[RMDB]
RNA sequence: GGGAACGACUCGAGUAGAGUCGAAAAGGCUGUUGAAAUACAUUCCUGUGCCGGCAAUAAAGUGUGUAUGGAGGUCUCAAUGGCUCGGAAGUGCCAGCAAACCGGCGUAGAUAUUAGCAGACGUAUGAUAGGAUGCAUCCGUUCGCGGAUGCAUCAAGGUAUACAAAGUGUUCGCACUUUGUAUACCAAAAGAAACAACAACAACAAC
Reactivity to DMS in 0.01 (KOAc 150mM, MgCl2 10mM, bicine 150mM(pH8.5), 24C), signal-to-noise 3, nucleotides 027 to 156: g040g030c020u000g060u000u000g000a100a100a060u000a050c040a110u000u000c090c030u000g030u010g020c010c010g030g000c010a070a070u000a090a060a100g020u000g040u000g010u000a060u000g000g010a090g040g030u000c010u000c070a070a140u000g000g000c020u000c030g040g020a140a140g030u000g020c010c000a070g010c050a040a100a060c010c020g010g030c040g030u000a050g000a110u000a080u010u000a080g020c000a080g000a080c060g030u000a060u000g020a200u010a110g010g000a030u010g000c010a010u000c000c000g030u000u010c300g020c030g030g000a030u000g020c000a000u000c010a020a010
Reactivity to 2A3 in 0.01 (KOAc 150mM, MgCl2 10mM, bicine 150mM(pH8.5), 24C), signal-to-noise 5, nucleotides 027 to 156: g030g020c030u030g020u230u040g060a020a000a060u090a030c030a020u080u080c020c030u030g030u050g010c000c010g000g000c040a040a050u120a140a140a050g060u030g000u010g000u050a060u050g020g020a030g030g040u010c010u000c070a100a130u080g010g000c030u030c060g030g030a070a030g030u040g050c010c000a010g050c070a080a050a040c000c000g000g000c000g030u040a020g040a110u070a060u190u150a060g020c040a030g030a090c060g090u120a070u160g130a070u100a080g150g010a000u000g000c000a000u010c000c010g000u020u050c180g010c000g060g000a000u000g000c000a010u000c000a000a000